[RMDB]
RNA sequence: GGGAACGACUCGAGUAGAGUCGAAAAAUCCCUAUGAAUUUGCAACACCCUCGCAGCAUUCAUAGAACCUCUUCUACACGUCGACAAGAAGCAAUUCUUGUAUUUAUGCCAGCCCUUCUUCAGGCUGUUUCGAAGUUUUGUUCGCAAAACUUCGAAAAAAAGAAACAACAACAACAAC
Reactivity to DMS in 0.01 (KOAc 150mM, MgCl2 10mM, bicine 150mM(pH8.5), 24C), signal-to-noise 1, nucleotides 027 to 126: a080u000c000c000c000u030a080u020g000a100a050u000u020u030g000c010a090a030c130a200c040c030c020u000c090g000c000a040g000c070a020u010u020c000a020u000a020g000a090a080c040c020u000c050u010u000c000u030a060c060a050c050g020u000c030g000a030c020a010a010g030a030a010g020c150a090a090u010u000c010u000u000g000u000a010u050u000u000a070u010g030c020c010a020g010c000c000c020u030u020c060u010u000c110a180g010g000c000u000g000
Reactivity to 2A3 in 0.01 (KOAc 150mM, MgCl2 10mM, bicine 150mM(pH8.5), 24C), signal-to-noise 3, nucleotides 027 to 126: a000u000c000c000c000u030a040u050g050a020a030u040u060u110g020c010a020a000c020a150c110c000c010u100c060g000c010a010g000c010a020u000u050c000a000u010a050g000a030a040c000c010u070c000u080u030c000u090a030c030a000c060g090u070c010g110a010c000a010a020g030a030a010g050c030a010a130u060u000c020u000u010g030u040a050u000u170u020a120u070g080c000c000a000g030c030c000c000u100u160c040u060u020c010a010g040g000c020u000g040
The record gives the reactivity of an RNA of 177 nucleotides to DMS and 2A3. Reactivities are given for positions 27 through 126. The reactions ran in a buffer of 150 mM KOAc, 10 mM MgCl2 and 150 mM bicine (pH 8.5), at 24 C. It was measured as part of the RMDB library RFM100. For 2A3 the reverse transcriptase was SuperScript II with manganese.